[RMDB]
RNA sequence: GGGAACGACUCGAGUAGAGUCGAAAAUACUGACUCUGUGAUGGUGGAGUUUGACGUGCAAGGUCGCAAAGGUCAAGAGGCGAUUGAUUACUCAUGGCAACAGGGUGAGCAGGCUGCCGAGCAGUGUACUAAGUUGUUCAAGGCGCCAAACGACCUGUCAUCAGGUCUGGUUCGCCAGACCUGAUGAAAAAGAAACAACAACAACAAC
Reactivity to 2A3 in 0.01 (KOAc 150mM, MgCl2 10mM, bicine 150mM(pH8.5), 24C), signal-to-noise 3, nucleotides 027 to 156: u160a010c040u030g060a040c010u020c030u050g070u060g080a110u100g010g030u030g050g040a050g010u050u080u110g070a040c050g010u010g040c080a080a060g020g000u040c020g050c140a080a070a080g070g000u040c050a040a010g020a050g030g030c030g030a020u010u080g050a030u010u110a020c010u030c110a080u100g050g000c020a070a030c030a100g040g000g040u040g010a000g020c030a030g040g020c040u140g040c030c020g020a000g000c000a000g020u000g010u050a020c010u070a070a080g010u010u020g010u060u030c060a140a090g030g000c030g000c030c000a060a070a000c020g070a090c000c000u030g020
Reactivity to DMS in 0.01 (KOAc 150mM, MgCl2 10mM, bicine 150mM(pH8.5), 24C), signal-to-noise 3, nucleotides 027 to 156: u000a090c070u000g000a060c060u000c030u000g020u010g020a080u000g040g050u000g000g020a070g010u000u010u000g010a100c070g030u000g000c030a090a100g020g010u000c030g010c060a050a090a080g020g040u000c050a080a120g010a160g010g020c060g000a110u000u000g020a150u010u000a040c030u000c050a090u010g020g030c030a080a060c050a090g010g000g020u000g010a100g010c050a120g010g000c010u000g020c020c040g030a050g030c050a090g000u010g040u010a100c140u000a100a200g010u000u000g020u020u000c040a090a110g000g000c020g010c050c060a040a050a100c050g000a020c010c010u000g010
Structure probing data (2A3 and DMS) for a 207-nucleotide construct. Conditions: 150 mM KOAc, 10 mM MgCl2 and 150 mM bicine (pH 8.5), 24 C.